The data come from the RNA Mapping Database (RMDB), library OK1LIB. The record gives the reactivity of an RNA of 177 nucleotides to 2A3 and DMS. The 2A3 profile rests on 67,657 reads. Conditions: 150 mM KOAc, 10 mM MgCl2 and 150 mM bicine (pH 8.5), 24 C.
RNA sequence: GGGAACGACUCGAGUAGAGUCGAAAAGUGGCGGUCGAUUAUGGAUACAGACCGCUGCACACGAUGCACCGAGCACGAUGCAAGACCCUCAUCAUCAGAGGCGAAUUGGUGAGAAGCACUUAAUGCAAGUGUCUUAGGAGUUCGCUCCUGAGACACUAAAAGAAACAACAACAACAAC
Reactivity to 2A3 in 0.01 (KOAc 150mM, MgCl2 10mM, bicine 150mM(pH8.5), 24C), signal-to-noise 9, nucleotides 027 to 126: g020u020g010g010c010g000g040u010c020g030a060u100u120a160u300g230g030a090u100a200c050a040g000a000c000c000g000c000u000g000c000a010c000a010c020g050a040u070g010c020a010c020c040g010a020g030c050a020c120g040a020u080g020c020a040a030g040a100c000c010c000u010c020a060u000c000a010u020c010a020g040a050g160g030c040g040a060a080u080u040g020g000u020g020a040g020a050a020g030c040a040c100u090u150a100a030u160g030c050a060
Reactivity to DMS in 0.01 (KOAc 150mM, MgCl2 10mM, bicine 150mM(pH8.5), 24C), signal-to-noise 9, nucleotides 027 to 126: g020u000g010g010c010g000g010u010c000g000a130u030u020a300u030g010g000a140u030a110c230a220g000a010c010c010g010c000u000g010c000a100c170a090c100g000a060u010g000c100a040c030c020g000a160g010c050a050c060g000a070u000g010c040a060a060g000a120c110c020c010u000c040a090u010c060a040u020c080a070g020a060g000g000c060g000a090a090u010u000g000g010u000g000a050g010a090a080g010c060a050c120u020u020a040a060u020g010c080a110